[RMDB]
RNA sequence: GGGAACGACUCGAGUAGAGUCGAAAAUUGAAAAUGCAACCAAUGAUGUUGCUUGCCAACCAACAUCAAAAACUGGUAGGUUUACUCCUGUACUCUCAACCAUCCUAUUGAUAACUGGUGUUAUUACAUAUAUCCAUUAGUUCGCUAAUGGAUAUAUAAAAGAAACAACAACAACAAC
Reactivity to DMS in 0.01 (KOAc 150mM, MgCl2 10mM, bicine 150mM(pH8.5), 24C), signal-to-noise 8, nucleotides 027 to 126: u030u010g010a050a040a080a060u030g000c060a080a070c030c040a100a160u020g000a050u010g000u000u000g000c030u000u010g000c060c060a100a110c250c000a010a030c010a030u010c040a060a060a090a090a090c140u010g000g000u010a030g010g010u020u020u020a060c080u010c030c020u000g010u010a040c050u010c020u000c050a040a070c070c040a060u000c030c020u010a070u020u010g000a070u020a050a100c100u010g010g010u010g010u000u010a070u010u000a060c220
Reactivity to 2A3 in 0.01 (KOAc 150mM, MgCl2 10mM, bicine 150mM(pH8.5), 24C), signal-to-noise 9, nucleotides 027 to 126: u060u030g040a020a030a020a050u180g040c050a040a030c010c020a040a150u130g020a030u050g000u010u010g000c020u030u110g060c010c010a010a010c010c000a000a010c000a010u050c010a010a040a070a050a060c090u060g050g030u040a070g020g050u050u090u080a080c050u040c020c000u020g030u060a070c020u010c010u030c050a020a070c020c000a050u070c010c020u120a110u140u160g100a070u070a180a050c080u090g030g020u070g070u100u070a090u080u100a020c040